[RMDB]
RNA sequence: GGGAACGACUCGAGUAGAGUCGAAAACGUCCUCCCUUCCCCCUCGAGCCUUCUUCGAGUCGGACCGGCUCAUCUCGGCAGAGGGCGGCAGUCCUGGGUUCUCUUAUCUUUUCUCUGAUAAAGAGGAGUCGUAUUGCGUUCGCGCAAUACAAAAGAAACAACAACAACAAC
Reactivity to 2A3 in 0.01 (KOAc 150mM, MgCl2 10mM, bicine 150mM(pH8.5), 24C), signal-to-noise 7, nucleotides 027 to 129: c020g100u050c000c010u030c000c000c000u020u040c000c000c000c000c000u010c020g040a050g020c000c010u090u090c020u070u090c080g020a000g020u010c030g030g070a090c030c010g010g000c000u010c000a070u020c040u030c010g010g000c030a020g010a030g030g030g010c000g010g000c030a020g050u030c000c000u040g030g020g000u070u000c000u000c000u020u050a070u070c020u040u090u150u020c110u000c030u070g120a140u140a170a180a030g020a020g030g010a020g070u090c070
Reactivity to DMS in 0.01 (KOAc 150mM, MgCl2 10mM, bicine 150mM(pH8.5), 24C), signal-to-noise 4, nucleotides 027 to 129: c170g000u020c050c020u010c000c000c000u090u000c020c010c000c050c020u030c080g010a110g020c080c040u020u040c000u010u010c080g000a070g050u030c030g000g060a220c120c060g000g030c010u000c040a030u000c080u050c030g000g000c050a160g010a170g000g060g010c060g010g020c160a070g000u040c030c030u040g000g030g050u040u010c000u030c030u010u010a090u000c000u020u050u080u000c090u000c010u050g000a090u040a050a100a050g000a000g030g000a050g040u000c090